[RMDB]
This 177-nucleotide RNA was probed chemically with DMS and 2A3. DMS adducts were read by reverse transcription with MarathonRT. The reactions ran in a buffer of 150 mM KOAc, 10 mM MgCl2 and 150 mM bicine (pH 8.5), at 24 C. 2A3 is a SHAPE reagent: it acylates the 2'-hydroxyl of flexible nucleotides of all four kinds.

RNA sequence: GGGAACGACUCGAGUAGAGUCGAAAAGCAUCUCAGUACGGCCAGGAAGAGAAAUCGAAUGAGACGCCGUUAGUAAUGGCGAAUGAACGCGGCACAGUCCAAACCGAAGCCUUCGGGCAAUGUGGUGCACAGCAACUCCUUUCGAGGAGUUGCUGUGAAAAGAAACAACAACAACAAC
Reactivity to DMS in 0.01 (KOAc 150mM, MgCl2 10mM, bicine 150mM(pH8.5), 24C), signal-to-noise 1, nucleotides 027 to 126: g000c160a000u000c020u040c000a000g000u020a080c060g000g000c000c000a010g010g010a030a020g000a030g000a030a050a030u000c000g020a030a210u030g000a170g000a000c030g000c010c000g040u040u050a080g000u020a030a000u000g000g000c270g090a100a050u000g000a110a110c060g030c070g000g000c010a140c260a230g010u020c000c080a010a070a130c040c000g020a000a030g030c010c100u000u010c070g030g010g000c040a090a000u050g070u060g030g000u040g000
Reactivity to 2A3 in 0.01 (KOAc 150mM, MgCl2 10mM, bicine 150mM(pH8.5), 24C), signal-to-noise 2, nucleotides 027 to 126: g010c000a080u000c000u000c000a020g090u140a000c040g000g070c000c010a060g040g120a010a000g150a010g020a070a130a000u020c050g030a070a060u040g040a000g000a120c040g000c010c010g030u050u000a030g000u030a060a020u050g200g000c140g040a000a020u060g000a040a000c030g000c000g010g000c000a010c030a110g020u000c010c060a030a050a000c050c000g030a050a010g100c000c000u000u010c120g040g000g020c020a010a010u060g030u080g000g050u010g060